[RMDB]
RNA sequence: GGGAACGACUCGAGUAGAGUCGAAAAGAACGAGGUCUGCCCUCUUCAUAUAUCCUUUCCUCAGCAGACCUCGAAGGGCUUGAGAACGAGGAUGGAAAGGAUAUAUGAAAUGUUCUCAAGCCCAAGACUACACCUAACUAUUCGUAGUUGGGUGUAGAAAAGAAACAACAACAACAAC
Reactivity to 2A3 in 0.01 (KOAc 150mM, MgCl2 10mM, bicine 150mM(pH8.5), 24C), signal-to-noise 9, nucleotides 027 to 126: g060a050a010c000g000a000g000g000u000c000u010g010c010c020c020u070c040u060u040c020a010u030a010u010a050u150c010c000u030u110u000c000c000u020c000a000g000c000a000g000a000c000c000u000c000g010a050a030g000g000g000c010u010u010g000a000g000a010a010c030g000a010g020g010a020u040g030g070a040a020a010g030g010a010u030a000u000a000u060g040a030a060a070u160g000u000u000c000u000c000a000a000g000c000c000c000a000a000g000a000
Reactivity to DMS in 0.01 (KOAc 150mM, MgCl2 10mM, bicine 150mM(pH8.5), 24C), signal-to-noise 9, nucleotides 027 to 126: g010a160a100c010g010a010g000g010u000c020u000g010c010c030c060u000c100u000u000c020a010u000a020u000a030u010c010c020u000u000u000c000c000u000c050a300g000c010a020g000a020c000c000u000c000g010a040a050g020g010g010c010u000u000g000a030g010a020a030c020g000a020g010g010a040u000g000g010a090a080a120g000g010a040u000a010u000a010u000g010a100a090a060u010g010u000u000c000u000c010a020a020g010c000c000c000a010a020g000a210